This 207-nucleotide RNA was probed chemically with 2A3. 2A3 adducts were read by reverse transcription with SuperScript II with manganese. 2A3 is a SHAPE reagent: it acylates the 2'-hydroxyl of flexible nucleotides of all four kinds. It was measured as part of the RMDB library OK3TST.
RNA sequence: GGGAACGACUCGAGUAGAGUCGAAAAUUUUAGUGAAAAUGGUCCUGAGUCCAAUGCAUGGUGGCUACACGAGGCUCCAUUUCACUACUGUCUCCACAAAAACGAACGGUCACAUACAGAGACGUGUAACUGUAGAUGCACACAGAGAUUGUGUAAACGCAUGGGUACGAUUCGUCGUACCCAUGCGAAAAGAAACAACAACAACAAC
Reactivity to 2A3 in 0.01 (KOAc 150mM, MgCl2 10mM, bicine 150mM(pH8.5), 24C), signal-to-noise 1, nucleotides 027 to 156: u160u170u030u070a000g000u010g030a070a000a000a160u010g000g010u100c000c000u000g030a010g000u010c010c010a090a090u060g050c000a030u030g030g030u030g020g020c050u080a030c080a000c140g040a110g000g030c120u020c090c020a050u000u000u000c000a000c020u030a040c050u100g000u040c000u000c080c000a120c010a050a090a010a030a020c050g130a120a000c020g000g070u080c040a020c000a080u060a000c020a000g000a000g050a120c100g030u000g050u060a040a000c000u030g010u050a030g040a120u080g080c050a000c000a000c000a000g060a030g000a190u040u040g010u000g000u010a020a050a000
Notes
The RNA was probed in 150 mM KOAc, 10 mM MgCl2 and 150 mM bicine (pH 8.5) at 24 C. The 2A3 profile rests on 513 reads.